[RMDB]
RNA sequence: GGGAACGACUCGAGUAGAGUCGAAAAGGAACAUCCUUCGGGAUGUUCCAUAGGCGGCGCCUCUCGCUAAGCGGCGCGCAGAGCCGCGCAGCGCAGCUUGAAAGUAAGCCUAGUUCGCUAGGCUUAACGCAGCUGAUAUAUUCGUAUAUCAGCUGCGAAAAGAAACAACAACAACAAC
Reactivity to 2A3 in 0.01 (KOAc 150mM, MgCl2 10mM, bicine 150mM(pH8.5), 24C), signal-to-noise 1, nucleotides 027 to 126: g000g010a020a010c010a000u000c010c000u060u090c180g050g000g000a000u000g010u010u000c010c000a000u000a000g000g010c070g060g020c070g000c020c020u050c020u000c050g000c030u020a130a030g010c020g040g000c020g010c010g000c040a030g050a020g270c050c000g000c000g000c030a030g050c030g000c000a020g020c000u040u080g060a110a080a030g090u070a010a010g020c010c000u000a000g000u010u040c130g020c090u000a000g000g000c000u000u010a030a010
Reactivity to DMS in 0.01 (KOAc 150mM, MgCl2 10mM, bicine 150mM(pH8.5), 24C), signal-to-noise 2, nucleotides 027 to 126: g010g010a000a000c000a000u000c000c010u000u020c170g020g020g010a000u000g000u000u000c000c000a010u000a020g000g000c000g010g000c020g020c020c050u000c070u000c040g010c120u010a080a150g040c030g000g020c010g000c070g000c150a100g000a140g020c070c020g030c000g010c080a040g010c010g020c090a030g000c030u000u000g010a070a050a110g000u000a030a000g000c000c000u000a000g000u000u010c150g010c000u000a000g000g010c010u000u000a000a070
An RNA of 177 nucleotides, treated with 2A3 and DMS and read out base by base. The RNA was probed in 150 mM KOAc, 10 mM MgCl2 and 150 mM bicine (pH 8.5) at 24 C. Values cover nucleotides 27 to 126.